[RMDB]
RNA sequence: GGGAACGACUCGAGUAGAGUCGAAAAAUAUCCACACACCAAACUGUUUGAUUCACAUCACACCCAAAUACAAACGGUUUAAAAAAGAGGAUGCUUUCAAAAUUUCAAGGUAACAAAAAGAGGUGCAGCAUUAAUUAUAUUUCGAUAUAAUUAAUGCAAAAGAAACAACAACAACAAC
Reactivity to DMS in 0.01 (KOAc 150mM, MgCl2 10mM, bicine 150mM(pH8.5), 24C), signal-to-noise 3, nucleotides 027 to 126: a150u020a060u020c020c020a090c110a110c030a080c110c060a030a040a020c020u000g000u020u000u000g000a120u010u000c130a070c070a070u010c100a050c080a100c040c010c020a090a070a030u010a120c080a050a040a030c040g000g000u000u000u000a000a060a080a050a060a060g010a050g000g010a050u000g000c080u020u010u030c050a030a040a040a080u030u030u020c060a020a060g000g000u010a040a090c050a020a060a030a120a060g000a040g020g050u010g000c130a090
Reactivity to 2A3 in 0.01 (KOAc 150mM, MgCl2 10mM, bicine 150mM(pH8.5), 24C), signal-to-noise 7, nucleotides 027 to 126: a000u110a040u020c010c010a040c000a000c010a010c050c030a030a040a030c010u020g030u030u040u050g070a070u120u090c040a020c020a140u070c030a030c010a040c030c020c010a080a070a030u170a070c050a030a060a010c010g030g050u030u060u150a080a140a030a010a000a010g100a050g050g010a020u030g020c020u030u130u080c100a170a190a170a220u060u130u060c040a050a030g060g010u060a130a080c050a090a090a020a010a000g080a040g010g030u040g020c040a020

Description
An RNA of 177 nucleotides, treated with DMS and 2A3 and read out base by base. It was measured as part of the RMDB libraries RFM100 and RFMREP. For 2A3 the reverse transcriptase was SuperScript II with manganese. Reactivities are given for positions 27 through 126. DMS adducts were read by reverse transcription with MarathonRT.